[RMDB]
RNA sequence: GGGAACGACUCGAGUAGAGUCGAAAAGUAAAAGCUGUUUCUGGAUCUACUGGAGCAGAAAUGAAAAAGUUAAGUGAAUUGGCUGUUAAUAUGGGAGAAACAACAAAAUACUCCAGUGUUCAAGCAGGUCAAGGUAUCGAGGAAUUAAUAAAGGCUGUACCAAUUCUUCUUUCGAGAAGAAUUGGUAAAAAGAAACAACAACAACAAC
Reactivity to 2A3 in 0.01 (KOAc 150mM, MgCl2 10mM, bicine 150mM(pH8.5), 24C), signal-to-noise 2, nucleotides 027 to 156: g030u050a000a090a040a050g020c040u030g020u040u110u010c020u070g040g020a080u040c020u060a090c010u110g000g000a020g020c030a000g100a040a060a100u170g030a040a020a070a000a000g080u080u060a080a010g020u030g140a100a040u060u050g050g000c040u020g030u030u090a090a020u030a170u150g110g010g000a020g060a090a090a010c030a000a030c050a060a060a060a020u020a050c000u030c020c000a020g020u020g020u070u070c060a050a000g030c030a030g090g000u010c050a020a020g050g020u040a020u070c040g000a000g030g000a060a040u080u140a100a040u150a070a030a060g110g000c050u150g020
Reactivity to DMS in 0.01 (KOAc 150mM, MgCl2 10mM, bicine 150mM(pH8.5), 24C), signal-to-noise 1, nucleotides 027 to 156: g020u000a130a120a090a230g060c000u010g020u000u000u000c010u000g000g000a260u000c020u000a090c030u000g000g000a050g000c020a100g000a020a070a090u000g000a040a020a030a200a090g020u000u000a020a080g010u000g000a060a140u000u010g010g010c000u000g010u000u010a080a070u020a120u030g030g000g000a050g000a230a100a130c030a040a220c070a000a020a090a050u000a040c000u000c020c030a060g000u000g000u000u000c070a030a060g030c050a060g020g040u000c020a010a050g030g010u000a120u000c020g000a010g000g010a050a080u030u000a050a070u030a100a090a070g050g060c040u000g020
This 207-nucleotide RNA was probed chemically with 2A3 and DMS.
DMS adducts were read by reverse transcription with MarathonRT.
Conditions: 150 mM KOAc, 10 mM MgCl2 and 150 mM bicine (pH 8.5), 24 C.